[RMDB]
This 177-nucleotide RNA was probed chemically with 2A3 and DMS. 2A3 adducts were read by reverse transcription with SuperScript II with manganese. High DMS reactivity at an A or C suggests that its Watson-Crick edge is free. It was measured as part of the RMDB library OK1LIB. For 2A3, 7,466 sequencing reads were counted. Conditions: 150 mM KOAc, 10 mM MgCl2 and 150 mM bicine (pH 8.5), 24 C.
RNA sequence: GGGAACGACUCGAGUAGAGUCGAAAACACACGAACACACAGGUACACGACUGCUAUGCGUAUGCGGGAGUGUGCGAAGAAAUACGCAUAAAGAAUGUGUGGAAGUGUGGAAGAGUUAAAUACUCGAGGGAUAUACAAUGUUCGCAUUGUAUAUCCCAAAAGAAACAACAACAACAAC
Reactivity to 2A3 in 0.01 (KOAc 150mM, MgCl2 10mM, bicine 150mM(pH8.5), 24C), signal-to-noise 8, nucleotides 027 to 126: c010a000c000a010c000g140a300a010c020a000c000a000c000a020g030g090u090a030c030a000c060g090a020c040u030g020c010u070a050u220g080c060g180u130a050u150g010c020g050g070g010a090g010u070g030u040g000c020g030a050a020g070a040a150a020u230a020c070g030c090a040u090a120a060a020g170a110a120u050g010u010g000u000g010g010a090a010g000u010g000u010g000g010a030a030g010a000g000u030u130a060a090a080u170a100c000u010c010g010a140
Reactivity to DMS in 0.01 (KOAc 150mM, MgCl2 10mM, bicine 150mM(pH8.5), 24C), signal-to-noise 4, nucleotides 027 to 126: c000a000c000a020c000g000a280a300c010a000c020a010c020a050g000g010u020a070c030a010c040g020a160c010u020g050c020u000a120u040g010c230g010u040a070u030g000c020g000g000g000a180g030u000g000u000g020c010g000a130a100g010a130a090a030u040a120c090g000c050a110u030a040a070a080g010a110a060u000g020u010g020u000g020g000a060a190g010u010g010u000g000g000a070a080g000a100g010u000u000a030a040a140u030a060c000u000c010g000a300